[RMDB]
RNA sequence: GGGAACGACUCGAGUAGAGUCGAAAAUGUACCGUAAGGUGGUUCAGGAACAAGGACUGGGCAAGACCGGUGCCAGCCGCCGCGGUAAUACCGGCAGUCCAAGUGAUGGCCGAUAUUAUUGGGCCUAUCCCUAAACAAUAUUCGUAUUGUUUAGGGAAAAAGAAACAACAACAACAAC
Reactivity to DMS in 0.01 (KOAc 150mM, MgCl2 10mM, bicine 150mM(pH8.5), 24C), signal-to-noise 9, nucleotides 027 to 126: u020g010u010a070c010c010g010u020a070a090g010g020u010g000g010u000u010c110a110g010g010a120a070c140a090a170g000g010a080c020u000g000g010g010c100a090a100g010a200c030c020g000g010u010g000c030c040a080g010c020c030g010c040c030g010c040g010g000u000a030a050u000a060c020c000g000g000c010a090g010u000c000c010a080a150g010u030g000a060u010g000g010c000c000g000a050u010a020u010u010a070u000u010g010g000g000c020c030u000a110
Reactivity to 2A3 in 0.01 (KOAc 150mM, MgCl2 10mM, bicine 150mM(pH8.5), 24C), signal-to-noise 9, nucleotides 027 to 126: u140g010u030a020c000c010g020u050a040a110g040g040u050g010g020u070u100c090a060g070g060a080a060c040a100a130g050g030a020c010u030g010g050g040c100a100a030g070a080c000c000g010g010u040g080c020c020a020g010c020c020g020c010c020g040c010g000g000u020a020a000u040a030c020c000g000g000c010a010g020u000c010c010a180a060g050u130g150a050u050g030g000c000c010g000a000u010a040u090u050a060u040u090g040g010g000c010c010u010a070